The data come from the RNA Mapping Database (RMDB), library TTRDEL.
This 177-nucleotide RNA was probed chemically with DMS and 2A3.
DMS adducts were read by reverse transcription with MarathonRT.
RNA sequence: GGGAACGACUCGAGUAGAGUCGAAAAGAUAUGGACUAGCUCGAUAAGAUGUGUGGUCGGAAACGACCACCAUCUUUUGACGAGCUGUCCUAAGUCAAAGCCGUACAUAGUUCGCUAUGUACGGCAACAUUACAUUUAAGUUCGCUUAAAUGUAAUGAAAAGAAACAACAACAACAAC
Reactivity to DMS in 0.01 (KOAc 150mM, MgCl2 10mM, bicine 150mM(pH8.5), 24C), signal-to-noise 9, nucleotides 027 to 126: g000a040u010a300u010g000g000a010c010u010a020g020c000u000c000g010a150u000a020a010g000a010u000g010u010g040u000g010g010u000c000g000g000a090a080a200c010g010a010c000c000a000c000c000a000u000c000u000u000u000u000g010a200c110g000a010g010c000u000g000u000c000c000u010a020a090g000u000c030a090a120a130g010c000c000g000u000a000c000a000u000a000g000u000u010c260g010c000u000a000u000g000u000a000c000g000g000c010a000a010
Reactivity to 2A3 in 0.01 (KOAc 150mM, MgCl2 10mM, bicine 150mM(pH8.5), 24C), signal-to-noise 9, nucleotides 027 to 126: g020a010u080a050u120g010g000a010c110u190a050g000c000u010c010g050a070u030a120a040g000a010u020g300u050g000u000g070g010u010c030g010g010a080a070a020c010g000a000c000c000a000c000c000a000u010c000u010u000u010u010g030a020c000g000a000g000c000u000g000u000c000c000u000a100a020g030u010c060a140a080a030g000c010c000g000u000a000c000a000u020a000g020u040u070c300g020c150u000a000u000g000u000a000c000g000g000c000a000a000